This 177-nucleotide RNA was probed chemically with 2A3 and DMS. The data come from the RNA Mapping Database (RMDB), library OK2TST. 2A3 is a SHAPE reagent: it acylates the 2'-hydroxyl of flexible nucleotides of all four kinds. The reactions ran in a buffer of 150 mM KOAc, 10 mM MgCl2 and 150 mM bicine (pH 8.5), at 24 C.

RNA sequence: GGGAACGACUCGAGUAGAGUCGAAAAGCGGGCAGGAGCUGGUGCUGCGCGCGGAGGUUGCUGGCGAACGCGACGACGCGGCGGUUGAUCUCCUGAAUCUGGCGCCUCUGCGUGAAGACGACGGGCCGUUAGGUAAUAGGUUCGCCUAUUACCUAACAAAAGAAACAACAACAACAAC
Reactivity to 2A3 in 0.01 (KOAc 150mM, MgCl2 10mM, bicine 150mM(pH8.5), 24C), signal-to-noise 7, nucleotides 027 to 126: g040c020g010g020g020c030a030g030g050a060g040c060u060g040g040u100g030c020u030g010c030g000c010g000c010g020g010a010g030g030u170u300g010c020u030g020g030c040g040a120a030c020g030c030g070a120c070g020a040c040g040c010g080g020c040g030g000u080u090g080a130u030c040u010c040c010u020g030a030a080u030c030u020g010g000c000g010c010c000u020c010u010g000c010g000u020g030a020a020g040a020c060g010a020c030g010g000g020c020c020
Reactivity to DMS in 0.01 (KOAc 150mM, MgCl2 10mM, bicine 150mM(pH8.5), 24C), signal-to-noise 9, nucleotides 027 to 126: g010c050g010g010g010c040a060g010g000a090g010c080u000g010g020u000g020c030u000g010c030g010c020g010c010g010g010a030g010g010u000u010g050c010u000g010g020c130g000a090a100c080g010c050g010a130c160g010a110c070g020c040g010g010c080g010g010u000u000g010a110u000c080u000c030c030u000g010a080a120u010c030u000g010g000c020g000c010c010u000c020u000g000c010g020u000g000a070a070g010a080c060g010a100c090g000g000g020c100c120